[RMDB]
RNA sequence: GGGAACGACUCGAGUAGAGUCGAAAAAGAUCAGUAGGGACCUGAUCUAAGGGCCAGUACCAGCAGAAGAAGAACAAGCCAAUUACGUGCCAGCAGCCGAAGUAAUACGUAGGGUCCGAGCGUAUCAAAAUAUAUUUUAUUUCGAUAAAAUAUAUUUAAAAGAAACAACAACAACAAC
Reactivity to DMS in 0.01 (KOAc 150mM, MgCl2 10mM, bicine 150mM(pH8.5), 24C), signal-to-noise 5, nucleotides 027 to 126: a040g010a000u010c010a020g000u020a140g010g010g010a110c160c010u020g000a020u000c010u000a080a080g010g000g030c020c020a070g020u020a080c040c020a080g020c060a060g010a080a060g000a090a100g020a100a080c140a060a140g010c040c040a090a090u030u010a070c100g000u020g010c010c030a050g010c050a050g010c040c040g000a050a090g000u030a070a070u010a040c040g000u010a120g000g000g000u000c020c010g000a110g000c040g000u010a030u030c030a050
Reactivity to 2A3 in 0.01 (KOAc 150mM, MgCl2 10mM, bicine 150mM(pH8.5), 24C), signal-to-noise 4, nucleotides 027 to 126: a010g000a000u010c010a000g090u130a140g040g020g070a030c020c000u000g000a000u000c000u030a040a090g030g020g010c000c000a000g030u050a070c020c010a000g040c030a000g040a180a010g040a070a000g030a080a050c070a100a030g040c020c010a030a020u120u050a060c070g010u060g030c030c010a010g010c020a010g020c060c010g010a050a000g040u090a030a070u050a070c030g030u020a070g030g020g020u000c000c010g020a020g000c010g010u050a040u100c050a000
This 177-nucleotide RNA was probed chemically with DMS and 2A3. The reactions ran in a buffer of 150 mM KOAc, 10 mM MgCl2 and 150 mM bicine (pH 8.5), at 24 C. The 2A3 profile rests on 2,875 reads.